[RMDB]
RNA sequence: GGGAACGACUCGAGUAGAGUCGAAAACAUUACAGCCUAAGGCAGGUGACAGGAAAGGAGAGAUCCAGCCUCUCAAACAUCCAGCAGAGAGACCAUAGGUAAGUGAUUUUUCCCUCCCCAAGCCUCAUCCAUAACGUUUAUUCGUAAACGUUAUGGAAAAAGAAACAACAACAACAAC
Reactivity to DMS in 0.01 (KOAc 150mM, MgCl2 10mM, bicine 150mM(pH8.5), 24C), signal-to-noise 7, nucleotides 027 to 126: c150a060u000u000a050c070a300g010c020c020u000a040a070g010g010c080a090g020g030u000g000a110c140a090g010g000a040a070a140g000g000a060g010a060g000a070u000c070c080a100g010c060c010u000c020u000c020a090a100a150c160a080u000c050c060a060g020c070a100g010a110g010a090g000a090c010c020a100u000a040g000g000u010a050a090g010u000g010a040u000u010u010u000u010c000c010c010u000c020c000c000c040a090a130g000c090c040u000c090a160
Reactivity to 2A3 in 0.01 (KOAc 150mM, MgCl2 10mM, bicine 150mM(pH8.5), 24C), signal-to-noise 6, nucleotides 027 to 126: c020a010u060u130a020c020a050g030c000c010u050a070a040g030g020c040a020g100g060u040g090a070c060a050g040g080a040a060a020g120g010a040g000a000g000a030u040c040c000a020g080c040c000u000c000u000c000a110a140a040c040a090u060c040c010a010g040c060a010g090a000g010a010g060a200c020c010a050u050a030g040g010u070a220a060g010u020g090a060u060u010u010u040u020c010c000c020u020c010c000c000c010a020a030g050c020c030u100c020a040